[RMDB]
Chemical mapping of a 207-nucleotide RNA with DMS and 2A3.
RNA sequence: GGGAACGACUCGAGUAGAGUCGAAAAAGUUUUGCCUGUUAGGUGAGGCUCCUAUGCAAACACAGGCCACUGCCCAAAAAUGUCCAAAGACGCCAAUGGGUAGAACAGGGUUUGUCGGAUUAAGGCUAAAACAGCCCAUGCUUCGGCAUGGGCUGAAGUAACGAUGUUAGUUCGCUAACAUCGUUACAAAAGAAACAACAACAACAAC
Reactivity to DMS in 0.01 (KOAc 150mM, MgCl2 10mM, bicine 150mM(pH8.5), 24C), signal-to-noise 1, nucleotides 027 to 156: a080g000u010u000u010u010g010c010c010u000g030u020u010a080g060g000u000g010a110g010g010c000u000c030c020u000a100u020g040c150a100a070a110c040a080c010a070g030g000c010c040a210c030u000g030c000c000c010a010a080a090a090a110u000g000u000c020c040a110a090a250g010a130c030g000c080c000a030a200u000g000g010g040u020a100g010a050a100c040a200g030g000g010u000u010u000g050u000c050g000g010a100u010u010a040a070g020g000c010u000a050a020a150a230c000a050g000c000c000c000a000u010g010c000u000u000c300g020g040c010a050u020g020g000g050c000u000g020a000a070
Reactivity to 2A3 in 0.01 (KOAc 150mM, MgCl2 10mM, bicine 150mM(pH8.5), 24C), signal-to-noise 2, nucleotides 027 to 156: a000g050u020u050u060u050g030c020c000u100g120u200u150a050g000g010u030g040a030g030g040c040u090c010c010u070a070u190g030c020a040a070a040c010a010c000a040g000g030c000c010a040c010u020g030c020c000c040a000a000a000a000a020u010g010u010c030c020a130a080a090g020a000c000g000c010c010a020a060u010g000g000g010u010a000g000a030a010c030a020g000g050g000u000u020u040g050u060c040g030g000a010u130u170a150a030g030g000c030u030a030a010a060a070c050a020g040c010c000c000a000u000g000c020u070u080c250g070g000c000a000u060g070g030g000c010u000g000a010a000

The DMS profile rests on 2,005 reads. The 2A3 profile rests on 1,443 reads.